[RMDB]
RNA sequence: GGGAACGACUCGAGUAGAGUCGAAAAAGCGCGCAUACUACGGUAUGCGCGCAAUCAGAAAUCGGGAAUGAUGUUCUCCCCUGGGAUUCCAAAACCGCUGUUUCGCUGAUGACGUCUGCUUUUUUACUCACCACCGUUUGGUUCGCCAAACGGUGAAGAAUACCAAUUGCUUCGGCAAUUGGUAUUCAAAAGAAACAACAACAACAAC
Reactivity to 2A3 in 0.01 (KOAc 150mM, MgCl2 10mM, bicine 150mM(pH8.5), 24C), signal-to-noise 1, nucleotides 027 to 156: a000g000c010g020c020g120c040a010u050a030c020u010a030c100g040g010u010a010u030g010c000g060c000g010c000a000a030u060c010a010g090a040a070a040u140c040g010g000g010a040a190u080g040a100u090g080u110u060c020u020c020c010c030c000u000g000g000g110a140u150u080c010c010a020a070a030a060c020c030g000c050u030g010u100u040u070c090g010c010u020g010a050u010g010a040c050g020u020c010u030g000c000u030u150u000u000u040u120a080c030u030c000a090c010c010a000c000c000g000u020u000u000g060g020u000u020c200g080c060c000a000a000a010c000g000g000u000g000a000a000